An RNA of 207 nucleotides, treated with 2A3 and DMS and read out base by base.
The reactions ran in a buffer of 150 mM KOAc, 10 mM MgCl2 and 150 mM bicine (pH 8.5), at 24 C.
It was measured as part of the RMDB library OK3TST.
2A3 adducts were read by reverse transcription with SuperScript II with manganese.
RNA sequence: GGGAACGACUCGAGUAGAGUCGAAAAAUGUUGAGGACAAAGAAAUUCUCUACGUCCCCACGACUGAUAAAAGCAUUCUUGAAUACUAUGGUUUAGAUGCGCAAAAGUAUGUAAUAUAUUUGCAAACGCUUGCGCAGAAAUGGAAUGUCCAAUAUAGCGAUGUAAUAACAUUCGUGUUAUUACAUCGAAAAGAAACAACAACAACAAC
Reactivity to 2A3 in 0.01 (KOAc 150mM, MgCl2 10mM, bicine 150mM(pH8.5), 24C), signal-to-noise 7, nucleotides 027 to 156: a000u120g000u020u020g000a020g010g010a020c060a050a280a050g120a060a170a090u140u020c020u000c000u010a010c010g030u030c010c010c000c000a040c040g120a040c080u150g090a100u120a130a080a020a020g010c010a010u010u010c010u060u070g060a060a060u090a160c070u070a060u170g030g040u050u070u120a060g010a080u040g000c000g000c000a010a020a020a050g020u020a040u080g010u010a060a010u130a040u070a100u130u050u040g000c000a050a080a010c010g020c070u000u000g000c000g000c000a000g020a010a070a010u070g000g020a020a010u020g050u060c060c040a070a040u120a030u060a110g070
Reactivity to DMS in 0.01 (KOAc 150mM, MgCl2 10mM, bicine 150mM(pH8.5), 24C), signal-to-noise 4, nucleotides 027 to 156: a020u000g010u010u010g020a050g040g010a090c030a060a210a110g010a110a120a300u010u010c020u000c010u000a110c250g000u000c020c000c010c030a100c080g000a300c050u020g000a130u000a050a080a130a120g000c010a030u000u000c020u010u010g010a130a090u000a080c040u000a060u000g060g000u000u000u000a090g010a250u000g010c010g000c020a010a020a050a070g000u000a040u010g020u000a020a050u010a200u010a130u000u000u000g010c000a030a260a050c010g000c120u000u000g010c020g030c000a040g000a040a070a120u000g020g010a030a040u000g000u010c020c020a050a110u000a100u000a120g010